[RMDB]
Conditions: 150 mM KOAc, 10 mM MgCl2 and 150 mM bicine (pH 8.5), 24 C. Chemical mapping of a 177-nucleotide RNA with 2A3 and DMS. The DMS profile rests on 4,273 reads. It was measured as part of the RMDB library OK2TRN. The 2A3 profile rests on 2,828 reads. For 2A3 the reverse transcriptase was SuperScript II with manganese. High DMS reactivity at an A or C suggests that its Watson-Crick edge is free.
RNA sequence: GGGAACGACUCGAGUAGAGUCGAAAACCAGCCUGGCCAAUAUGGCGAAACCCGGUCUCUACUAAAAAUACAAAAAUCAGCCAGGCGUGGUGGCAUGCACCUGUACUCCCAGCUACUCAGGAGGCUGAGAUUCAGAGGAAUUCGUUCCUCUGAAUCUAAAAGAAACAACAACAACAAC
Reactivity to 2A3 in 0.01 (KOAc 150mM, MgCl2 10mM, bicine 150mM(pH8.5), 24C), signal-to-noise 2, nucleotides 027 to 126: c000c000a000g010c000c000u030g010g000c020c020a100a090u130a100u260g030g010c020g010a070a040a020c000c000c030g060g020u020c040u010c040u050a110c040u150a130a030a020a060a080u200a090c120a040a180a030a050a060u120c070a010g030c010c020a030g000g000c020g000u020g030g030u020g010g030c040a040u110g010c010a040c020c000u010g020u060a070c010u000c000c000c000a010g000c020u060a060c020u060c090a050g020g020a040g060g000c030u050g040
Reactivity to DMS in 0.01 (KOAc 150mM, MgCl2 10mM, bicine 150mM(pH8.5), 24C), signal-to-noise 4, nucleotides 027 to 126: c010c000a130g010c030c010u000g000g020c030c050a060a070u000a040u000g010g000c020g000a020a070a070c010c010c010g010g000u000c020u000c030u000a070c050u010a010a020a040a090a070u000a060c110a020a040a040a050a060u000c120a110g010c030c010a050g000g020c030g020u000g000g020u000g010g010c060a040u000g030c070a070c030c010u000g000u010a050c110u000c010c010c010a070g000c050u000a050c070u000c070a090g010g010a120g010g020c070u000g010